Record summary:
An RNA of 177 nucleotides, treated with DMS and 2A3 and read out base by base. As a SHAPE reagent, 2A3 marks flexible, mostly unpaired nucleotides at the ribose 2'-OH. It was measured as part of the RMDB libraries RFM100 and RFMREP. Conditions: 150 mM KOAc, 10 mM MgCl2 and 150 mM bicine (pH 8.5), 24 C. Reactivities are given for positions 27 through 126. DMS adducts were read by reverse transcription with MarathonRT.
RNA sequence: GGGAACGACUCGAGUAGAGUCGAAAAUGGAAUUGAAAAAUUGGUAGGGGAGCAUUCUAGUUGCACUGAAGGCGUAUGGCGAUGUAUGCUGGAGCGGCUAGAAAAGCAAAUGUAGGCAUAAGUAACGUAAUUGUAGAUAGUUCGCUAUCUACAAUUAAAAAGAAACAACAACAACAAC
Reactivity to DMS in 0.01 (KOAc 150mM, MgCl2 10mM, bicine 150mM(pH8.5), 24C), signal-to-noise 9, nucleotides 027 to 126: u010g000g010a080a070u010u010g000a060a060a070a070a070u010u000g000g010u020a040g010g000g000g010a130g020c040a130u010u000c010u000a010g010u010u000g020c010a300c160u040g010a150a120g010g000c010g020u000a020u000g010g010c170g010a080u010g010u000a010u000g000c000u000g000g000a030g020c010g010g000c010u010a020g000a000a020a050a090g020c050a050a060a060u020g010u010a060g000g000c070a070u010a050a080g000u020a060a080c180g010
Reactivity to 2A3 in 0.01 (KOAc 150mM, MgCl2 10mM, bicine 150mM(pH8.5), 24C), signal-to-noise 8, nucleotides 027 to 126: u100g030g060a030a060u090u120g070a110a070a020a040a060u100u090g040g020u110a040g010g010g010g020a030g010c010a020u010u000c000u000a000g000u010u020g000c020a040c190u040g020a020a000g010g000c010g010u010a010u030g080g020c080g020a020u140g010u010a010u020g000c000u010g000g010a030g010c010g000g000c000u000a000g000a010a020a010a010g010c020a020a030a070u130g030u090a040g050g000c040a050u060a140a060g070u050a090a020c070g030